[RMDB]
RNA sequence: GGGAACGACUCGAGUAGAGUCGAAAACCGCCGGCUUGGCUAAGGCCUUCCGGGGCGACCAUGAAAGUGUGGUCAGCCGUGCCCUGCCUCCUUCGGGAAACACACAACUGGGUUCGUGAAACAGGGCAGAGUCCAAGCUAUUCGUAGCUUGGACUCUAAAAGAAACAACAACAACAAC
Reactivity to 2A3 in 0.01 (KOAc 150mM, MgCl2 10mM, bicine 150mM(pH8.5), 24C), signal-to-noise 2, nucleotides 027 to 126: c000c000g040c000c000g000g020c210u050u020g020g000c000u030a110a130g210g010c010c000u010u000c000c000g020g010g000g030c010g000a000c000c000a000u010g140a260a280a070g240u300g000u000g090g000u000c020a000g020c000c000g050u040g000c000c000c000u020g030c000c050u030c000c000u030u060c080g070g000g020a040a120a020c110a000c040a000c020a060a190c120u130g150g030g010u090u110c060g020u070g080a080a000a020c000a010g000g030g000c000
Reactivity to DMS in 0.01 (KOAc 150mM, MgCl2 10mM, bicine 150mM(pH8.5), 24C), signal-to-noise 3, nucleotides 027 to 126: c010c000g050c000c000g000g010c150u030u000g000g050c020u010a150a120g010g040c020c000u000u000c000c000g000g000g010g010c020g000a060c000c000a010u010g000a210a060a210g020u080g090u000g000g020u010c000a080g010c000c000g000u050g010c000c000c000u010g030c180c070u000c000c040u000u030c150g010g000g000a040a100a180c060a180c020a060c100a140a090c100u010g000g000g020u010u000c160g030u000g000a130a100a220c050a030g010g010g010c030
The data come from the RNA Mapping Database (RMDB), libraries RFM100 and RFMREP.
This 177-nucleotide RNA was probed chemically with 2A3 and DMS.
The RNA was probed in 150 mM KOAc, 10 mM MgCl2 and 150 mM bicine (pH 8.5) at 24 C.